[RMDB]
RNA sequence: GGGAACGACUCGAGUAGAGUCGAAAAUUCCCUGCCCACCGGGUGUGAAGCUGGUCAAAGAUCCGGCGUUUUAUCCGGUUAAGCCCAUACGGACAGGCGGGGCAGCUGCCGAAAAACAAAAGAAAAACGAGUAGUAGGAGUUCGCUCCUGCUACUCGAAAAGAAACAACAACAACAAC
Reactivity to 2A3 in 0.01 (KOAc 150mM, MgCl2 10mM, bicine 150mM(pH8.5), 24C), signal-to-noise 9, nucleotides 027 to 126: u010u000c000c000c010u030g000c000c000c000a010c000c000g010g000g000u030g060u060g070a030a010g000c010u010g000g040u080c120a270a100a070g070a110u090c010c000g020g000c000g000u080u120u080u120a010u010c010c010g020g000u000u100a050a010g000c010c000c000a150u130a130c000g020g010a010c020a010g020g000c010g000g000g000g000c000a000g010c010u100g000c000c010g090a110a020a010a010a010c070a010a080a040a030g180a060a100a020a020a010
Reactivity to DMS in 0.01 (KOAc 150mM, MgCl2 10mM, bicine 150mM(pH8.5), 24C), signal-to-noise 6, nucleotides 027 to 126: u010u000c000c010c020u040g000c000c000c000a090c000c010g010g010g010u000g010u010g000a020a040g000c000u000g000g020u020c120a170a160a200g000a090u040c010c010g000g020c010g000u010u030u010u020a020u000c010c000g000g010u000u060a120a090g000c000c010c010a090u010a110c020g000g000a030c010a140g010g000c010g000g000g000g010c020a130g000c200u040g000c010c010g000a170a080a060a110a100c200a100a070a080a120g010a090a070a050a150a130
Structure probing data (2A3 and DMS) for a 177-nucleotide construct. The data come from the RNA Mapping Database (RMDB), library OK1LIB. The DMS profile rests on 16,053 reads. Reactivities are given for positions 27 through 126.